[RMDB]
Structure probing data (2A3) for a 177-nucleotide construct. The RNA was probed in 150 mM KOAc, 10 mM MgCl2 and 150 mM bicine (pH 8.5) at 24 C. It was measured as part of the RMDB library OK1LIB. Values cover nucleotides 27 to 126.
RNA sequence: GGGAACGACUCGAGUAGAGUCGAAAAGUCGAGUUCGAUCAGCUCGGCAGGGGAGACGUUGCGCAGCGACGGAUCCAACCUGCUGGGCCUGCGCCUUCGAAUCGACGGCCAGGCCACCGCUCGCUGCGCUGGCGUAAAGCUUCGGCUUUACGCCAGCAAAAGAAACAACAACAACAAC
Reactivity to 2A3 in 0.01 (KOAc 150mM, MgCl2 10mM, bicine 150mM(pH8.5), 24C), signal-to-noise 2, nucleotides 027 to 126: g070u070c020g000a000g090u050u130c090g010a150u110c040a000g070c010u000c040g010g050c030a050g020g020g020g000a080g010a000c020g090u080u090g030c210g010c100a100g010c000g030a000c000g000g000a050u000c030c010a020a060c010c030u040g000c070u100g010g020g020c010c000u060g010c100g000c020c010u000u040c020g080a280a260u210c050g070a030c020g020g000c000c000a010g000g040c040c010a070c070c000g000c030u000c000g000c020u040g000c000